[RMDB]
RNA sequence: GGGAACGACUCGAGUAGAGUCGAAAAUUUGUCAAUCUUUGGACAUACUCUAAACAGUGAUAGGCAGCUUGUGUUUGACAUCUACAAUGUCCACAUCUACAAUAAAGAGUUGGACAACUUUGACGAAGGUACUAUUAAAGUCCUUGAAGAGACAGCACCUAUUAACGCAGUUCGCUGCGUUAAUAGGAAAAGAAACAACAACAACAAC
Reactivity to DMS in 0.01 (KOAc 150mM, MgCl2 10mM, bicine 150mM(pH8.5), 24C), signal-to-noise 3, nucleotides 027 to 156: u000u000u000g030u010c020a060a050u000c030u000u000u020g020g030a070c040a060u000a060c040u010c020u000a060a100a150c080a150g020u000g000a190u000a100g030g030c020a060g020c050u000u010g030u010g020u000u000u000g030a080c030a030u000c050u000a140c150a100a100u000g010u000c010c020a050c040a070u000c010u000a040c060a070a160u010a090a110a090g000a060g010u010u000g010g010a090c010a030a050c040u010u000u000g010a050c030g020a060a060g020g000u010a060c090u000a140u000u000a030a090a140g010u000c020c000u000u010g030a080a120g020a170g000a120c030a060g010c020a150
Reactivity to 2A3 in 0.01 (KOAc 150mM, MgCl2 10mM, bicine 150mM(pH8.5), 24C), signal-to-noise 9, nucleotides 027 to 156: u060u020u060g020u000c010a020a060u020c080u100u090u090g020g000a010c010a030u170a090c030u020c030u090a090a170a070c060a090g040u060g110a090u100a060g050g000c040a030g010c050u060u050g020u030g060u060u120u120g050a030c020a030u040c030u090a060c080a140a110u050g000u000c000c010a010c010a080u000c020u080a070c040a120a070u140a210a240a020g020a000g010u070u060g010g010a000c000a030a050c070u080u060u080g030a030c040g020a010a000g040g000u060a040c020u030a060u160u150a160a100a020g020u010c020c000u030u040g090a100a060g030a020g020a040c030a030g040c020a020
An RNA of 207 nucleotides, treated with DMS and 2A3 and read out base by base. The data come from the RNA Mapping Database (RMDB), library OK3TST. The reactions ran in a buffer of 150 mM KOAc, 10 mM MgCl2 and 150 mM bicine (pH 8.5), at 24 C.